[RMDB]
RNA sequence: GGGAACGACUCGAGUAGAGUCGAAAAUUGAACUCUUAGCCCAAAAAGAGCAUGCUACUAAAUAUGGAUGCGCGCUCUUUGUCGUCGACGAUCCGCUCAAAGCGCUUCACAUUCUUGCCAAGUGGCAAGACCUACCACAGUUCGCUGUGGUAGGUCUAAAAGAAACAACAACAACAAC
Reactivity to DMS in 0.01 (KOAc 150mM, MgCl2 10mM, bicine 150mM(pH8.5), 24C), signal-to-noise 3, nucleotides 027 to 126: u000u010g000a100a130c030u010c040u000u010a100g000c000c010c020a070a090a050a030a020g010a010g010c110a050u000g020c010u010a180c010u000a040a090a170u010a110u010g010g000a130u010g000c030g030c300g000c000u000c030u000u000u000g010u000c070g010u000c050g010a070c080g000a090u000c070c030g020c090u000c060a050a060a090g000c070g000c030u000u000c050a110c060a090u000u010c030u000u000g000c050c030a200a130g010u000g020g010c020a080
Reactivity to 2A3 in 0.01 (KOAc 150mM, MgCl2 10mM, bicine 150mM(pH8.5), 24C), signal-to-noise 3, nucleotides 027 to 126: u050u060g050a050a040c000u000c010u050u090a100g030c020c000c000a040a030a030a030a010g010a010g010c030a020u040g070c030u020a080c010u090a100a140a300u300a180u260g070g000a010u040g000c010g000c010g020c010u020c000u020u020u020g010u010c030g030u020c030g050a090c050g020a090u040c020c020g010c040u020c070a060a110a010g040c030g020c010u060u090c010a040c020a130u050u030c030u020u030g010c050c010a280a110g100u120g090g020c020a010
This 177-nucleotide RNA was probed chemically with DMS and 2A3. For DMS, 2,468 sequencing reads were counted. Reactivities are given for positions 27 through 126. 2A3 adducts were read by reverse transcription with SuperScript II with manganese. DMS adducts were read by reverse transcription with MarathonRT. The data come from the RNA Mapping Database (RMDB), library OK2TRN.